[RMDB]
Chemical mapping of a 170-nucleotide RNA with DMS and 2A3. For 2A3, 12,891 sequencing reads were counted. For 2A3 the reverse transcriptase was SuperScript II with manganese. Source: RMDB library 15KLIB, as collected in RNAgym. DMS adducts were read by reverse transcription with MarathonRT. Values are in units of 0.01, from 0 to 300, in steps of 10.
RNA sequence: GGGAACGACUCGAGUAGAGUCGAAAAGCCUACUAUGUGUGACAUCAAACAAAUGUUGUUCUGCAUGGAAGUUGUAAACAAGUACUUCGAAAUCUAUGACGGUGGUUGUCUUAAUGCUUCUGAAGUGAAACUAUCUAGUUCGCUAGAUAGAAAAGAAACAACAACAACAAC
Reactivity to DMS in 0.01 (KOAc 150mM, MgCl2 10mM, bicine 150mM(pH8.5), 24C), signal-to-noise 6, nucleotides 027 to 129: g000c040c000u030a140c060u030a050u000g020u020g030u000g000a040c040a020u000c060a040a100a140c300a070a170a130u040g020u000u000g020u020u020c060u000g000c000a050u030g030g000a060a100g000u040u030g000u050a000a030a030c060a070a080g030u040a050c060u010u030c020g000a060a090a080u000c100u040a080u010g030a060c050g040g070u040g030g040u020u010g010u030c070u000u000a060a050u060g010c120u000u000c020u040g000a070a050g010u060g030a080a040a090
Reactivity to 2A3 in 0.01 (KOAc 150mM, MgCl2 10mM, bicine 150mM(pH8.5), 24C), signal-to-noise 9, nucleotides 027 to 129: g060c000c020u030a070c020u030a030u030g050u000g060u060g020a020c020a030u070c030a000a110a240c060a080a180a080u220g000u020u000g030u070u050c010u020g000c000a010u020g030g010a070a060g020u020u060g090u130a110a090a040c070a080a050g180u090a040c020u000u010c010g060a050a050a050u080c060u070a120u190g040a020c050g030g060u170g040g130u130u140g010u060c000u050u060a110a050u150g050c060u030u040c040u120g030a010a020g010u060g060a110a010a000